RNA sequence: GGGAACGACUCGAGUAGAGUCGAAAAGAUAUGGAUCAUAUUGGAGCAGGACCUUCGGAAACGAAGGUCACUGCUAUGAAGAUAUGAGUCCUAAGUCAAAAGUGGUACGAGUUCGCUCGUACCACAAGAAUUCGACAUGGUUCGCCAUGUCGAAUUCAAAAGAAACAACAACAACAAC
Reactivity to DMS in 0.01 (KOAc 150mM, MgCl2 10mM, bicine 150mM(pH8.5), 24C), signal-to-noise 1, nucleotides 027 to 126: g000a020u000a010u000g000g000a120u010c000a000u000a000u000u000g000g000a010g060c000a000g030g000a000c000c000u000u000c000g000g010a000a010a010c000g020a020a000g000g010u000c000a010c020u010g000c000u010a180u010g000a220a260g000a020u000a000u000g000a040g020u010c000c000u000a000a100g000u000c000a070a060a100a130g000u000g000g000u000a000c020g000a000g020u000u020c300g000c020u000c000g020u000a000c000c000a000c000a000a030